This 177-nucleotide RNA was probed chemically with 2A3.
For 2A3 the reverse transcriptase was SuperScript II with manganese.
The 2A3 profile rests on 413 reads.
It was measured as part of the RMDB library OK1LIB.
RNA sequence: GGGAACGACUCGAGUAGAGUCGAAAAACUGGUAUUGUGAUAUUCGCUAAAUAUGGACAUAUCCAUCAUUUAUUUUCUAAAGUAAACUUGAAAAAAAUAUAUACUUGCCUUGUAUAUGGCAAAACCCUCCGUAUCAUCACUUCGGUGAUGAUACGGAAAAAGAAACAACAACAACAAC
Reactivity to 2A3 in 0.01 (KOAc 150mM, MgCl2 10mM, bicine 150mM(pH8.5), 24C), signal-to-noise 1, nucleotides 027 to 126: a000c050u120g010g000u060a070u180u210g020u110g130a070u000a010u060u150c150g000c040u130a150a170a110u150a120u040g030g070a050c010a080u110a080u000c000c000a050u050c000a000u000u060u000a150u000u120u000u000c010u130a020a000a010g060u070a140a300a300c020u000u020g030a020a020a020a020a020a020a020u060a040u020a000u000a010c030u010u080g000c000c000u000u010g030u150a160u150a030u170g020g000c020a000a000a120a120c000c000c000